[RMDB]
RNA sequence: GGGAACGACUCGAGUAGAGUCGAAAAGGUGGUUACAUCCGAAUCACUAAAAUUGAAAAUAAAGAUGCAACAGGUUAUAUUAAUCAUUUGCUUCAGCUGAUUGGACCUUCUAUUUCUCAACAACAAGAUGGUGUGUUUAAUUCGUUAAACACACCAUAAAAGAAACAACAACAACAAC
Reactivity to DMS in 0.01 (KOAc 150mM, MgCl2 10mM, bicine 150mM(pH8.5), 24C), signal-to-noise 5, nucleotides 027 to 126: g010g020u000g020g030u030u030a050c160a070u010c040c040g030a120a050u010c020a010c060u010a050a060a090a090u060u020g000a070a120a090a150u020a090a090a100g010a040u000g010c030a050a020c200a110g000g010u000u000a070u040a070u030u010a020a020u000c040a100u000u000u010g000c010u000u000c040a070g030c080u000g000a060u010u000g000g000a020c030c000u000u010c060u010a060u020u020u000c010u010c010a040a050c200a060a110c270a060a060g010
Reactivity to 2A3 in 0.01 (KOAc 150mM, MgCl2 10mM, bicine 150mM(pH8.5), 24C), signal-to-noise 8, nucleotides 027 to 126: g040g000u040g020g020u050u070a070c030a090u090c050c030g070a020a030u040c010a020c060u120a060a070a130a180u140u170g090a090a050a020a030u220a050a100a030g040a040u060g010c020a010a020c020a070g000g040u080u040a180u040a050u290u200a130a030u020c050a090u020u030u080g020c000u050u020c020a030g010c050u050g030a090u050u070g040g000a020c010c000u030u080c020u060a130u020u050u000c040u000c010a070a230c030a060a010c010a030a050g010